Chemical mapping of a 177-nucleotide RNA with 2A3 and DMS. The reactions ran in a buffer of 150 mM KOAc, 10 mM MgCl2 and 150 mM bicine (pH 8.5), at 24 C. 2A3 adducts were read by reverse transcription with SuperScript II with manganese. DMS adducts were read by reverse transcription with MarathonRT. The 2A3 profile rests on 1,986 reads.
RNA sequence: GGGAACGACUCGAGUAGAGUCGAAAAUCUGCUGCUCCAGGCUCAUGACGUACCUUCGUGGCAUUAGCUAUAAGGUUACGGUGGGUGCUCUUGUUGCCAAUGAGGGCUGGAACGCCUCUGAGGAUGCGUUACGAGAGACUUUCGAGUCUCUCGUAACAAAAGAAACAACAACAACAAC
Reactivity to 2A3 in 0.01 (KOAc 150mM, MgCl2 10mM, bicine 150mM(pH8.5), 24C), signal-to-noise 2, nucleotides 027 to 126: u020c010u060g050c050u030g030c010u010c010c030a000g000g000c030u000c020a030u030g130a130c090g000u010a030c020c010u000u120c050g030u030g020g000c010a020u140u130a050g040c080u080a050u000a250a030g010g000u000u030a010c000g000g070u070g000g040g010u030g010c000u000c020u040u140g240u170u090g060c020c000a030a060u170g030a100g050g080g000c030u020g030g030a040a020c070g000c020c000u030c060u040g060a050g100g040a030u080g050c040
Reactivity to DMS in 0.01 (KOAc 150mM, MgCl2 10mM, bicine 150mM(pH8.5), 24C), signal-to-noise 3, nucleotides 027 to 126: u000c020u010g010c040u000g010c010u000c010c160a190g020g000c020u000c010a010u010g000a120c140g020u000a020c010c000u000u010c120g030u000g010g010c000a150u000u010a070g010c150u010a090u000a020a020g000g010u000u000a020c010g000g020u000g000g020g020u000g000c040u010c040u010u000g000u010u000g000c040c020a090a140u000g010a060g000g000g020c020u010g000g010a070a050c100g010c010c010u000c020u000g010a250g010g010a080u010g020c120